[RMDB]
RNA sequence: GGGAACGACUCGAGUAGAGUCGAAAAGGCGGUCACGAAGUUUACGGCAACACAAGCUGGGGAGGGGAUGGAAUAUCUCGCACUUGCCGGCUGGAAGACAAACGAUAUUAUUUCCGCCAUGCCCGGAAUGCUGGACCUUGCGGCGGCUGGUGCGCUCGCUUAGAUAGACCUUCGGGUCUAUCUAAGCAAAAGAAACAACAACAACAAC
Reactivity to 2A3 in 0.01 (KOAc 150mM, MgCl2 10mM, bicine 150mM(pH8.5), 24C), signal-to-noise 1, nucleotides 027 to 156: g020g020c000g000g000u130c020a050c250g060a060a070g010u030u110u140a080c030g040g000c060a210a030c020a140c030a090a140g000c070u000g000g020g010g040a100g000g000g000g000a110u050g020g020a110a040u030a070u280c050u040c060g050c000a000c000u000u030g040c000c060g060g140c020u000g000g200a040a040g020a020c100a060a040a050c040g060a080u000a030u300u030a000u020u140u010c000c020g000c010c040a050u060g000c040c000c000g000g010a000a050u080g000c000u090g020g050a020c000c010u010u080g050c030g080g000c000g000g110c050u020g000g000u040g010c000g000c050u000c040
The record gives the reactivity of an RNA of 207 nucleotides to 2A3. It was measured as part of the RMDB library OK3TST.